RNA sequence: GGGAACGACUCGAGUAGAGUCGAAAAGAUAUGGAGCUCACUACACAGCUCCCCACCUACCAGGUCGGAAACGACCUGUGUAGAGGCGAGAGCUCCUAAGUCAAAGGAGGCUCUUCGGAGCCUCCAAGUAUUUAUGGAUGUUCGCAUCCAUAAAUACAAAAGAAACAACAACAACAAC
Reactivity to 2A3 in 0.01 (KOAc 150mM, MgCl2 10mM, bicine 150mM(pH8.5), 24C), signal-to-noise 1, nucleotides 027 to 126: g040a030u170a180u290g000g000a010g030c010u030c040a020c140u300a140c260a040c060a160g060c010u070c080c050c010c000a040c010c020u000a010c020c000a000g000g020u000c000g020g030a040a010a050c000g000a000c010c000u020g000u020g000u010a000g010a050g050g020c060g050a200g000a000g000c000u040c000c010u010a020a010g050u060c070a080a010a080g000g010a000g020g010c010u010c030u010u080c180g080g010a000g000c000c000u000c000c000a010a010
Reactivity to DMS in 0.01 (KOAc 150mM, MgCl2 10mM, bicine 150mM(pH8.5), 24C), signal-to-noise 4, nucleotides 027 to 126: g010a070u000a080u010g010g000a000g020c000u000c010a110c130u020a140c140a160c220a130g000c110u000c050c000c010c070a300c110c000u000a000c000c000a020g000g000u000c000g000g000a040a030a050c000g010a000c010c010u000g000u010g000u000a000g000a110g010g000c100g010a120g030a030g010c000u000c010c000u010a020a080g000u000c080a080a120a140g000g010a030g000g000c000u000c000u000u010c150g020g000a030g000c010c010u010c000c020a000a050